[RMDB]
RNA sequence: GGGAACGACUCGAGUAGAGUCGAAAAUGGGGAAUGUAUUCCAGGCAGAAGGCACAGUGUGUAUGAAAGCUUAUUGUUAAGAAGAGUGUGUGGCCCAACCAGGAAACAGACAUUCUAAAGGCAUAGGGUCCACCCAGGAGCAUGGUGGACCCAGAUACCACUUUUAAUUAUUCGUAAUUAAAAGUGGAAAAGAAACAACAACAACAAC
Reactivity to 2A3 in 0.01 (KOAc 150mM, MgCl2 10mM, bicine 150mM(pH8.5), 24C), signal-to-noise 5, nucleotides 027 to 156: u110g020g000g020g020a040a040u050g020u090a100u090u050c050c020a030g020g000c040a030g040a180a040g060g020c020a000c020a040g060u050g010u020g040u120a090u160g090a070a040a020g020c010u080u070a100u180u180g060u080u130a100a060g030a090a010g020a050g020u060g020u010g010u040g100g020c000c020c010a020a040c020c020a030g010g080a030a030a020c020a010g110a030c010a030u060u010c060u090a060a080a050g050g000c030a070u140a100g010g000g010u010c000c000a000c000c020c020a030g030g100a060g020c080a050u050g010g000u010g000g000a000c000c000c000a000g000a000u020a000
Reactivity to DMS in 0.01 (KOAc 150mM, MgCl2 10mM, bicine 150mM(pH8.5), 24C), signal-to-noise 2, nucleotides 027 to 156: u000g010g000g060g010a110a030u010g020u010a160u010u010c030c020a090g060g060c030a090g020a120a110g010g030c030a070c010a110g000u010g020u010g030u000a050u000g010a100a120a090g020c040u000u010a090u000u010g000u000u000a060a140g010a080a150g000a060g010u000g030u010g000u000g010g010c030c000c070a060a140c070c070a120g000g010a060a050a060c030a080g010a070c030a080u000u010c030u010a040a070a090g030g010c050a090u000a090g020g030g020u010c010c000a000c010c000c010a170g000g000a100g020c110a070u000g000g040u000g000g010a010c000c000c010a000g000a040u000a160
An RNA of 207 nucleotides, treated with 2A3 and DMS and read out base by base.
Conditions: 150 mM KOAc, 10 mM MgCl2 and 150 mM bicine (pH 8.5), 24 C.
Source: RMDB library OK3TST, as collected in RNAgym.
The DMS profile rests on 3,302 reads.